The record gives the reactivity of an RNA of 207 nucleotides to 2A3.

RNA sequence: GGGAACGACUCGAGUAGAGUCGAAAACGCUGGGAACGAUGGUAGGCAAGGAAAUACUGAAGCGCGCACGGUAUGUUCUGAUGACCCGAGAGUAGUUCCUGUGCUGAAGCGCGCACGGCAACCGAAAGGUGCGAAAAGCGUAUAGUUCGCUAUACGCGCAGUGGUGGGGAUUCGUCCCCACCACUGCAAAAGAAACAACAACAACAAC
Reactivity to 2A3 in 0.01 (KOAc 150mM, MgCl2 10mM, bicine 150mM(pH8.5), 24C), signal-to-noise 2, nucleotides 027 to 156: c050g040c010u100g000g010g020a000a000c000g070a090u090g100g080u170a040g050g000c100a170a070g030g020a010a080a000u000a000c010u030g070a300a070g030c030g020c000g000c030a000c010g000g040u000a010u070g300u240u160c030u050g090a190u110g040a080c000c010c000g030a040g000a000g080u070a000g000u010u000c000c000u010g020u020g030c010u100g020a090a080g010c030g000c040g010c000a000c030g080g000c010a090a120c030c000g040a120a050a000g060g000u030g010c010g070a050a040a080a090g000c000g000u000a000u000a000g000u020u090c240g000c170u000a000u010a010c000g010c020
It was measured as part of the RMDB library RNAMAK. For 2A3, 1,559 sequencing reads were counted.